[RMDB]
RNA sequence: GGGAACGACUCGAGUAGAGUCGAAAAUAGUGACGAAGUUAGAGGAGAUGAUGCCCCAUGACACUAACAGGCUGUGUCUGGUGUGAUGUGAAGCUUAGGUGUGAGGAAACACUGCCAUUUGUAGUGGAAAGAGCACCUGAACAGUAGCCCAAACACAUCCGACUAAAAUAUUCGUAUUUUAGUCGGAAAAAGAAACAACAACAACAAC
Reactivity to 2A3 in 0.01 (KOAc 150mM, MgCl2 10mM, bicine 150mM(pH8.5), 24C), signal-to-noise 4, nucleotides 027 to 156: u090a000g060u060g030a020c040g070a100a030g020u070u060a060g050a030g050g040a050g020a070u050g010a020u090g020c020c000c000c010a030u150g020a020c030a010c080u080a160a040c050a090g130g000c070u070g040u010g020u020c010u010g020g000u020g010u040g040a040u040g010u030g050a060a030g020c040u060u080a010g010g010u010g010u020g010a080g020g100a030a010a000c030a010c000u020g010c020c030a160u090u100u270g010u000a020g000u000g000g020a040a130a060g040a020g000c000a010c000c010u000g020a030a000c010a030g030u060a010g010c000c000c030a020a020a030c110a010c010a050
Reactivity to DMS in 0.01 (KOAc 150mM, MgCl2 10mM, bicine 150mM(pH8.5), 24C), signal-to-noise 3, nucleotides 027 to 156: u000a080g020u000g010a110c070g010a110a130g040u000u000a060g000a150g010g020a110g000a070u010g010a110u000g010c030c010c010c040a090u010g040a070c020a050c030u000a080a220c060a090g010g020c050u020g040u000g030u000c040u000g010g040u000g020u010g000a110u000g010u010g010a100a110g030c050u000u000a050g040g040u000g010u000g000a220g000g010a230a080a130c030a040c020u010g000c010c200a170u000u010u010g030u010a040g060u010g000g010a050a080a070g010a300g010c030a020c020c010u000g000a030a030c020a090g030u010a140g000c010c010c020a010a040a110c050a060c090a140
Annotation
Structure probing data (2A3 and DMS) for a 207-nucleotide construct. For DMS the reverse transcriptase was MarathonRT. It was measured as part of the RMDB library OK3TST. The reactions ran in a buffer of 150 mM KOAc, 10 mM MgCl2 and 150 mM bicine (pH 8.5), at 24 C. As a SHAPE reagent, 2A3 marks flexible, mostly unpaired nucleotides at the ribose 2'-OH.